[RMDB]
RNA sequence: GGGAACGACUCGAGUAGAGUCGAAAAAAGACACGUAGUGGAUGCGGAAGUCGUCGAGCGGAUUCGUUCUCUUCGCAUUCGGUUCAACGUCCUGGACGAAACCCUGCAACGGGCCGUUGACAUGGCCUCUCUGAAGAUAGUUCGCUAUCUUCAGAGAAAAAGAAACAACAACAACAAC
Reactivity to DMS in 0.01 (KOAc 150mM, MgCl2 10mM, bicine 150mM(pH8.5), 24C), signal-to-noise 6, nucleotides 027 to 126: a070a050g010a070c050a080c100g010u000a110g020u010g010g000a030u000g000c070g000g010a050a070g010u010c080g010u000c070g000a090g030c100g010g010a120u000u000c010g010u000u000c010u000c030u000u000c030g010c020a060u000u000c040g010g010u010u000c030a050a050c040g000u000c020c030u000g010g010a110c070g000a070a070a110c030c020c030u010g010c110a090a090c110g000g010g000c020c010g000u000u010g020a070c150a120u010g000g010c070c050
Reactivity to 2A3 in 0.01 (KOAc 150mM, MgCl2 10mM, bicine 150mM(pH8.5), 24C), signal-to-noise 4, nucleotides 027 to 126: a000a000g100a020c050a020c090g050u080a050g160u030g140g010a020u020g020c020g060g040a040a020g070u140c080g070u080c050g040a030g050c070g030g160a210u170u200c010g030u040u010c010u000c000u020u040c010g000c020a010u050u030c020g050g030u120u070c030a020a020c030g010u020c020c040u020g050g000a020c040g040a100a040a050c040c010c000u050g010c040a060a040c030g020g000g010c000c000g010u020u040g030a020c030a050u070g030g000c000c020
Background: An RNA of 177 nucleotides, treated with DMS and 2A3 and read out base by base. For DMS, 10,853 sequencing reads were counted. For DMS the reverse transcriptase was MarathonRT. Conditions: 150 mM KOAc, 10 mM MgCl2 and 150 mM bicine (pH 8.5), 24 C.